[RMDB]
RNA sequence: GGGAACGACUCGAGUAGAGUCGAAAACUAGACGGGUUCGCCCGUCUAGAAACGGAGCGAAUAGGGGGCUUCGCCACCGGCCCAGCCCUUCCGCUGACCCCCAAAGCUCAACCUUCGGGUUGAGCAACAGUGCAAAUAUGUUCGCAUAUUUGCACUGAAAAGAAACAACAACAACAAC
Reactivity to DMS in 0.01 (KOAc 150mM, MgCl2 10mM, bicine 150mM(pH8.5), 24C), signal-to-noise 5, nucleotides 027 to 126: c000u000a000g000a000c000g010g000g020u000u010c230g020c000c000c000g010u000c000u000a000g000a050a080a090c040g000g010a290g000c010g010a020a040u010a170g020g000g000g010g010c300u010u000c050g000c010c000a050c100c040g000g000c030c030c040a140g000c030c020c020u000u000c080c050g020c070u010g000a210c010c010c010c010c030a130a090a130g000c000u000c000a000a000c000c000u010u000c160g010g000g000u000u000g010a010g010c000a020a040
Reactivity to 2A3 in 0.01 (KOAc 150mM, MgCl2 10mM, bicine 150mM(pH8.5), 24C), signal-to-noise 4, nucleotides 027 to 126: c000u000a000g000a000c010g010g050g000u030u080c170g070c050c000c000g000u000c000u000a000g000a000a000a000c020g010g010a010g060c010g020a070a050u160a300g010g000g000g000g030c020u010u010c010g010c010c020a240c030c070g040g000c000c020c010a030g010c010c010c000u110u110c060c030g060c100u100g200a300c000c000c000c010c020a080a030a010g000c000u000c000a000a000c000c000u020u050c140g100g000g000u010u010g000a000g000c000a000a010